[RMDB]
RNA sequence: GGGAACGACUCGAGUAGAGUCGAAAACCCUGGUUAUUCGUAACCAGGGGUUGAGUGAAUGCUCUCAGUGCAUCGGUGGAUCACACGAAACGCAUGGACGACAAUUACGGUUAUUCGUAACCGUAAAAUCCCAUAUUAAGUUCGCUUAAUAUGGGAUAAAAGAAACAACAACAACAAC
Reactivity to 2A3 in 0.01 (KOAc 150mM, MgCl2 10mM, bicine 150mM(pH8.5), 24C), signal-to-noise 9, nucleotides 027 to 126: c000c000c000u000g000g010u020u010a040u040u080c230g010u020a010a010c000c000a000g000g000g010g000u050u180g040a040g010u100g130a210a060u160g000c010u010c010u010c060a030g020u010g040c020a040u020c040g140g060u100g070g100a150u170c040a020c010a010c100g060a050a070a020c060g010c020a020u030g030g030a020c030g010a020c070a060a050u060u010a010c000g000g010u010u010a010u030u050c130g030u040a020a010c000c000g000u000a000a000a000
Reactivity to DMS in 0.01 (KOAc 150mM, MgCl2 10mM, bicine 150mM(pH8.5), 24C), signal-to-noise 9, nucleotides 027 to 126: c000c000c000u000g000g000u000u000a010u000u010c170g020u000a010a000c000c000a010g020g010g010g010u000u000g010a090g010u000g010a100a060u010g000c030u000c040u000c040a080g010u000g010c120a040u000c020g010g010u000g010g000a100u010c130a070c040a070c060g000a030a050a090c100g010c020a030u000g000g010a050c060g000a060c110a080a150u000u000a000c000g000g000u000u000a030u000u010c190g010u000a000a010c000c000g010u000a000a020a080